[RMDB]
RNA sequence: GGGAACGACUCGAGUAGAGUCGAAAAGCACAUGUUUUAAACAUGUGAUCGGAACGAAUGGUUUCUAAAUAAAACCAUGAAAGCAAUUGGAGGGCAAGUCUGGUGCCAGCAGCCGCGGUAAUACCAGUAUCAUGCUUCGAUUCGUCGAAGCAUGAUAAAAAGAAACAACAACAACAAC
Reactivity to 2A3 in 0.01 (KOAc 150mM, MgCl2 10mM, bicine 150mM(pH8.5), 24C), signal-to-noise 5, nucleotides 027 to 126: g010c000a000c010a000u000g060u010u090u050u190a190a190a000c000a000u000g000u020g030a040u050c030g100g050a060a100c040g050a140a020u000g020g050u030u030u010c060u130a110a090a070u200a020a060a020a000c000c000a000u040g060a120a080a010g040c050a030a090u080u050g060g000a060g010g010g020c020a050a040g040u000c020u020g010g000u030g090c010c000a020g040c020a000g020c030c040g010c020g030g030u050a030a020u030a110c000c010a010g020
Reactivity to DMS in 0.01 (KOAc 150mM, MgCl2 10mM, bicine 150mM(pH8.5), 24C), signal-to-noise 4, nucleotides 027 to 126: g010c000a010c010a010u000g000u000u000u020u030a080a110a050c000a000u000g000u000g020a080u010c110g020g010a120a080c120g010a130a020u000g010g010u010u010u000c050u010a050a120a120u060a140a010a000a010c000c000a020u000g010a170a120a120g010c110a080a100u020u000g000g020a070g000g000g010c080a050a080g000u000c000u000g000g020u000g020c020c030a030g000c010a060g020c090c060g000c040g010g000u000a020a080u020a150c020c010a110g010
Structure probing data (2A3 and DMS) for a 177-nucleotide construct. DMS adducts were read by reverse transcription with MarathonRT. It was measured as part of the RMDB libraries RFM100 and RFMREP. The RNA was probed in 150 mM KOAc, 10 mM MgCl2 and 150 mM bicine (pH 8.5) at 24 C.